[RMDB]
Chemical mapping of a 170-nucleotide RNA with 2A3 and DMS. For DMS the reverse transcriptase was MarathonRT. 2A3 adducts were read by reverse transcription with SuperScript II with manganese.

RNA sequence: GGGAACGACUCGAGUAGAGUCGAAAAAUAGGCUUAUCAAGAGAGGUGGAGGGACUGGCCCGAUGAAACCCGGCAGCCAGAAAUGGUGCCAAUUCCUGGAGCGGAAACGUUGAAAGAUGAGCCGAUGAAGGAGGGAGGUUCGCCUCCCUCAAAAGAAACAACAACAACAAC
Reactivity to 2A3 in 0.01 (KOAc 150mM, MgCl2 10mM, bicine 150mM(pH8.5), 24C), signal-to-noise 3, nucleotides 027 to 129: a000u170a040g000g010c000u020u030a020u050c060a170a040g050a020g010a050g050g000u050g050g000a010g020g020g000a030c030u020g090g000c000c000c000g070a150u050g030a020a020a010c000c000c000g020g000c030a060g260c000c010a000g040a000a070a030u040g020g010u040g000c000c000a000a000u050u040c000c000u070g060g000a030g040c030g010g010a050a030a010c070g050u050u190g060a070a040a020g000a010u040g010a010g000c000c010g010a100u130g050a020a060g120
Reactivity to DMS in 0.01 (KOAc 150mM, MgCl2 10mM, bicine 150mM(pH8.5), 24C), signal-to-noise 4, nucleotides 027 to 129: a030u000a140g010g030c030u020u080a090u050c000a030a030g060a100g020a130g000g050u050g000g000a070g020g010g010a070c080u040g080g040c050c060c010g030a070u000g040a080a150a080c070c050c030g040g000c090a090g060c040c010a010g020a070a060a080u000g000g000u030g010c000c040a060a080u020u040c000c010u000g020g060a110g030c050g030g000a100a090a080c090g030u060u040g030a060a040a050g010a080u000g010a060g070c000c000g010a120u060g030a100a120g080